[RMDB]
RNA sequence: GGGAACGACUCGAGUAGAGUCGAAAACACCGGGUCUUCGGACCCGGUGAAAAGGAGCCAAAAUAAGAACGGAAAGGGCAGACGGAGGCCAACUCUGUCAAAAAACUGAAGUCUUCGGACUUCAGAAGACUACUAUACACUUCGGUGUAUAGUAGUCAAAAGAAACAACAACAACAAC
Reactivity to 2A3 in 0.01 (KOAc 150mM, MgCl2 10mM, bicine 150mM(pH8.5), 24C), signal-to-noise 2, nucleotides 027 to 126: c010a010c010c000g000g020g000u000c000u010u130c220g060g010a000c010c000c020g000g000u010g000a000a010a000a010g070g030a040g020c010c010a060a090a020a070u270a110a050g080a130a030c020g030g060a060a070a060g060g010g000c040a020g030a000c000g010g010a010g030g000c050c030a040a100c010u010c020u010g020u040c000a020a020a030a040a090a020c010u000g000a000a000g000u000c000u050u140c230g040g000a010c000u010u000c010a000g020a030a000
Reactivity to DMS in 0.01 (KOAc 150mM, MgCl2 10mM, bicine 150mM(pH8.5), 24C), signal-to-noise 2, nucleotides 027 to 126: c010a000c000c010g000g000g000u000c000u000u020c190g050g010a010c000c000c000g010g010u000g000a010a030a100a120g010g020a190g020c020c030a070a040a080a100u000a090a060g010a130a100c070g000g000a050a030a070g000g010g020c250a040g010a030c030g010g010a030g000g030c130c130a070a130c020u010c020u000g000u030c010a020a070a070a030a070a090c010u000g010a020a000g020u000c000u000u000c240g030g010a000c000u000u010c000a000g000a100a100

Structure probing data (2A3 and DMS) for a 177-nucleotide construct.
It was measured as part of the RMDB library M2PK50.
The RNA was probed in 150 mM KOAc, 10 mM MgCl2 and 150 mM bicine (pH 8.5) at 24 C.
The DMS profile rests on 2,025 reads.
The 2A3 profile rests on 2,570 reads.